Source information:
An RNA of 177 nucleotides, treated with DMS and 2A3 and read out base by base. For 2A3, 749 sequencing reads were counted. The RNA was probed in 150 mM KOAc, 10 mM MgCl2 and 150 mM bicine (pH 8.5) at 24 C. As a SHAPE reagent, 2A3 marks flexible, mostly unpaired nucleotides at the ribose 2'-OH.
RNA sequence: GGGAACGACUCGAGUAGAGUCGAAAACGUUGAUAACUUUUCUGUUUACGGCGGCUGUAUUGCUCCAAAGUGAUAAAUAAGAAGAUCAUCAACAACAUAAAAAUCGAAAUACGGCUUGCAGUGCCUACAUUGUCCCGUCAUUCGUGACGGGACAAUGAAAAGAAACAACAACAACAAC
Reactivity to DMS in 0.01 (KOAc 150mM, MgCl2 10mM, bicine 150mM(pH8.5), 24C), signal-to-noise 1, nucleotides 027 to 126: c200g010u030u000g000a110u000a030a080c080u020u000u000u000c040u010g000u010u000u000a050c050g000g000c300g000g040c000u000g000u030a050u020u000g000c040u000c060c050a060a180a160g040u000g000a090u010a020a010a050u000a120a030g010a030a020g000a020u010c120a010u020c030a000a030c040a100a070c280a180u020a010a060a020a080a060u000c090g030a050a060a120u010a110c160g010g010c020u000u010g000c140a010g010u010g000c130c000u000a100
Reactivity to 2A3 in 0.01 (KOAc 150mM, MgCl2 10mM, bicine 150mM(pH8.5), 24C), signal-to-noise 1, nucleotides 027 to 126: c030g020u040u000g050a090u030a180a000c000u210u080u050u050c000u040g170u030u130u050a000c000g010g000c000g060g050c000u020g030u200a110u160u250g040c010u000c090c020a000a170a000g090u090g120a070u090a070a170a000u110a160a040g080a030a040g050a080u070c020a000u020c000a000a040c010a030a020c000a030u300a060a180a000a040a030u120c090g030a020a020a160u060a110c050g010g010c050u000u140g000c030a010g140u000g100c020c020u010a070